[RMDB]
Chemical mapping of a 177-nucleotide RNA with 2A3 and DMS.
The RNA was probed in 150 mM KOAc, 10 mM MgCl2 and 150 mM bicine (pH 8.5) at 24 C.
2A3 adducts were read by reverse transcription with SuperScript II with manganese.
Reactivities are given for positions 27 through 126.
RNA sequence: GGGAACGACUCGAGUAGAGUCGAAAAAUCAAGCGGAGCCAGACUGAAAGCUAGGUGCAUUUCCCUGGAGAUAUAGGGAACAGAGGGAAGAGGGCGAGAGGGACCAAUGGGUAGGGAGUAAUAAAGUAUACAAAUGCUGAUUCGUCAGCAUUUGUAUAAAAGAAACAACAACAACAAC
Reactivity to 2A3 in 0.01 (KOAc 150mM, MgCl2 10mM, bicine 150mM(pH8.5), 24C), signal-to-noise 4, nucleotides 027 to 126: a000u120c070a100a000g030c030g010g010a000g040c010c000a020g050a130c080u110g070a090a060a070g060c020u030a030g000g040u040g010c030a080u060u010u000c000c000c000u010g110g030a140g030a040u150a030u080a090g030g010g010a030a030c040a060g040a060g050g000g020a080a000g060a050g000g020g060c110g030a120g020a040g030g050g040a030c000c060a050a060u050g000g000g030u020a020g020g040g060a010g020u000a010a040u110a150a110a000g060u000
Reactivity to DMS in 0.01 (KOAc 150mM, MgCl2 10mM, bicine 150mM(pH8.5), 24C), signal-to-noise 4, nucleotides 027 to 126: a110u020c070a060a110g000c110g040g000a150g020c080c030a090g000a110c020u000g000a080a110a080g010c040u020a060g000g010u000g050c070a150u020u010u000c020c020c020u010g000g010a070g030a070u020a080u010a070g010g020g010a080a070c180a080g000a090g010g010g000a100a020g000a140g010g020g020c100g000a060g020a060g030g000g000a110c100c070a050a060u000g010g020g000u020a090g010g000g000a150g000u010a040a020u010a060a080a080g000u000